The record gives the reactivity of an RNA of 207 nucleotides to 2A3 and DMS.
For 2A3 the reverse transcriptase was SuperScript II with manganese.
Reactivities are given for positions 27 through 156.
DMS adducts were read by reverse transcription with MarathonRT.
The reactions ran in a buffer of 150 mM KOAc, 10 mM MgCl2 and 150 mM bicine (pH 8.5), at 24 C.
[RMDB]
RNA sequence: GGGAACGACUCGAGUAGAGUCGAAAAAGGGAAACAGCCCAGACCACCAGUUAAGGUCCCCAAAUAUAUGUUAAGUGGAAAAGGAUGUGGGGUUGCUUAGACAACCAGGAUGUUGGCUUAGAAGCAGCCACCAUUGAAAGAGUGCGUAAUAGCUCACCUUAUAAUAACCGUUCGCGGUUAUUAUAAGAAAAGAAACAACAACAACAAC
Reactivity to 2A3 in 0.01 (KOAc 150mM, MgCl2 10mM, bicine 150mM(pH8.5), 24C), signal-to-noise 3, nucleotides 027 to 156: a000g080g000g000a120a180a030c050a070g110c060c020c000a010g020a020c000c020a020c020c060a080g000u060u130a120a090g020g000u040c000c000c000c030a010a130a000u210a000u030a020u120g050u100u120a080a080g030u090g050g050a090a130a090a050g060g030a030u050g030u030g070g000g000g000u000u010g000c000u000u030a050g020a070c000a000a020c010c040a030g130g050a060u120g000u020u010g040g000c000u050u050a050g030a170a000g010c030a000g000c000c010a080c020c000a030u040u030g010a040a060a000g070a020g030u120g000c060g030u090a080a020u020a230g000c020u020c020a030c020
Reactivity to DMS in 0.01 (KOAc 150mM, MgCl2 10mM, bicine 150mM(pH8.5), 24C), signal-to-noise 2, nucleotides 027 to 156: a110g000g000g020a200a070a100c040a160g010c000c010c000a180g030a200c050c030a100c050c060a180g010u010u000a110a100g000g010u010c030c010c000c020a080a120a110u010a070u000a050u010g030u000u000a050a100g040u010g010g000a040a080a120a100g000g010a110u010g000u010g000g000g000g020u000u000g000c000u000u000a060g000a160c020a050a050c020c000a020g000g000a140u000g010u000u010g000g020c000u010u010a190g020a080a080g010c070a060g030c010c000a030c030c000a000u000u000g010a110a050a090g030a080g040u000g010c080g000u000a070a120u000a140g000c030u000c030a110c100